[RMDB]
RNA sequence: GGGAACGACUCGAGUAGAGUCGAAAAAAGGGCUGUGGCUGCCUGUAGCCAUGGGAUCUCCAACUGCAUGCCAGAGUAAUGGAGAGACUUUGACAGCUCAGGUCAGCACAGUGCCUGCAGCUGCCACCUAUUACGAAGUGUUCGCACUUCGUAAUAGAAAAGAAACAACAACAACAAC
Reactivity to DMS in 0.01 (KOAc 150mM, MgCl2 10mM, bicine 150mM(pH8.5), 24C), signal-to-noise 5, nucleotides 027 to 126: a120a030g000g010g010c010u000g000u000g000g010c000u000g020c210c000u000g000u010a040g030c010c010a050u010g010g010g010a240u000c000u000c000c010a050a160c030u000g000c050a120u010g020c260c050a040g000a160g010u000a110a080u000g010g000a020g010a030g000a160c020u000u000u000g000a110c180a090g010c060u000c010a010g000g010u010c010a020g010c030a030c030a010g020u000g010c020c000u000g000c160a060g000c100u000g000c020c030a120c190
Reactivity to 2A3 in 0.01 (KOAc 150mM, MgCl2 10mM, bicine 150mM(pH8.5), 24C), signal-to-noise 4, nucleotides 027 to 126: a000a000g020g010g000c020u020g020u050g120g040c010u020g010c010c000u030g050u090a000g000c020c000a010u030g000g020g000a030u010c010u000c000c010a050a080c010u020g030c050a250u250g100c120c010a030g010a020g080u170a190a150u060g000g000a000g000a000g000a010c000u020u030u090g080a090c120a020g010c000u000c000a010g010g000u180c020a000g020c010a010c000a000g010u020g260c000c000u010g000c010a010g010c010u110g070c010c010a050c020
The record gives the reactivity of an RNA of 177 nucleotides to DMS and 2A3.
2A3 adducts were read by reverse transcription with SuperScript II with manganese.
It was measured as part of the RMDB library RFMREP.
Conditions: 150 mM KOAc, 10 mM MgCl2 and 150 mM bicine (pH 8.5), 24 C.